[RMDB]
Chemical mapping of a 207-nucleotide RNA with 2A3 and DMS.
For 2A3 the reverse transcriptase was SuperScript II with manganese.
For 2A3, 6,156 sequencing reads were counted.
For DMS the reverse transcriptase was MarathonRT.
RNA sequence: GGGAACGACUCGAGUAGAGUCGAAAACCAAUAAUAACUGGCAAAGAAAAACAAAACCUAGCUUUCGCUGCCUAAUAAGCAGUAGCAUAGCUGAUCCUCCGUGCAUCGCCCAUGUGCUACGGUAAGGGUCUCACUCUAAGUGGGCUACACUAGUUAACAUACUGUUAAACUUCGGUUUAACAGUAUGAAAAGAAACAACAACAACAAC
Reactivity to 2A3 in 0.01 (KOAc 150mM, MgCl2 10mM, bicine 150mM(pH8.5), 24C), signal-to-noise 6, nucleotides 027 to 156: c000c020a000a020u240a060a030u050a030a020c050u070g080g000c080a050a120a120g110a150a190a100a040a040c080a050a130a070a030c040c070u070a010g010c000u020u020u020c010g000c000u000g010c010c000u060a110a070u220a160a000g000c010a000g010u060a060g010c060a010u040a010g000c010u020g000a010u030c000c000u000c000c010g010u010g000c000a000u000c040g000c000c000c000a000u020g000u000g000c030u100a010c010g000g030u050a080a140g030g010g030u010c020u050c020a100c020u130c030u100a040a060g010u010g000g000g030c000u050a010c060a010c080u080a020g060u040u040a080a010
Reactivity to DMS in 0.01 (KOAc 150mM, MgCl2 10mM, bicine 150mM(pH8.5), 24C), signal-to-noise 2, nucleotides 027 to 156: c010c010a090a120u010a150a130u000a050a030c060u010g000g000c060a080a140a130g000a090a040a060a070a140c030a070a060a130a080c050c040u000a050g030c000u000u000u010c040g000c000u000g020c010c000u050a070a100u000a080a060g020c010a020g040u000a070g070c100a060u000a020g050c010u020g000a080u000c020c000u000c000c010g080u000g000c030a020u000c040g020c050c020c040a100u010g020u000g010c020u000a040c030g000g000u010a130a050g030g020g000u000c050u000c050a040c110u000c120u000a050a080g060u000g000g010g020c000u000a120c070a070c020u000a090g010u000u000a060a280